This 207-nucleotide RNA was probed chemically with 2A3 and DMS.
For 2A3, 2,140 sequencing reads were counted.
For 2A3 the reverse transcriptase was SuperScript II with manganese.
The RNA was probed in 150 mM KOAc, 10 mM MgCl2 and 150 mM bicine (pH 8.5) at 24 C.

[RMDB]
RNA sequence: GGGAACGACUCGAGUAGAGUCGAAAAGAGGCGAAAUAAUUCCCAUCUCCUGUGUACGGCCGGAGAUGGGUGUGGCCGUACUAAUAAGCCUCAUAGUGACGAGAGUCACGAAUUCUGGAUAGCCUUUGGUAGUCGGCUAUCCUUUGACUACCGUAGACGGUAUUAUCCACUUCGGUGGAUAAUACCGAAAAGAAACAACAACAACAAC
Reactivity to 2A3 in 0.01 (KOAc 150mM, MgCl2 10mM, bicine 150mM(pH8.5), 24C), signal-to-noise 3, nucleotides 027 to 156: g010a010g000g000c010g080a100a020a050u180a040a040u170u070c000c000c000a000u000c000u000c000c000u010g010u010g020u060a060c050g070g020c000c030g020g000a010g000a000u010g010g010g000u030g010u020g070g020c090c020g020u010a020c010u020a020a140u080a120a000g000c000c000u000c000a060u110a040g000u020g010a000c010g030a030g010a010g130u010c010a020c000g000a000a030u160u060c020u050g020g000a000u010a010g000c000c000u040u030u090g140g000u050a090g080u100c020g000g000c010u010a000u020c000c000u010u040u030g020a010c000u030a040c000c010g020u020a050g030a090
Reactivity to DMS in 0.01 (KOAc 150mM, MgCl2 10mM, bicine 150mM(pH8.5), 24C), signal-to-noise 1, nucleotides 027 to 156: g000a030g010g050c020g000a130a070a110u030a100a180u020u010c010c000c000a070u000c010u000c000c000u000g000u000g000u000a050c140g020g000c040c090g020g010a070g010a030u000g010g000g040u000g020u000g030g000c010c030g020u000a100c060u000a120a180u010a040a240g000c010c010u000c000a170u010a180g000u010g010a040c000g010a300g000a230g030u000c000a010c010g000a040a060u010u000c060u010g020g020a110u000a050g010c010c000u000u000u010g050g020u000a110g030u000c130g010g010c030u000a040u000c060c070u000u000u000g000a050c030u000a040c000c000g030u000a190g010a250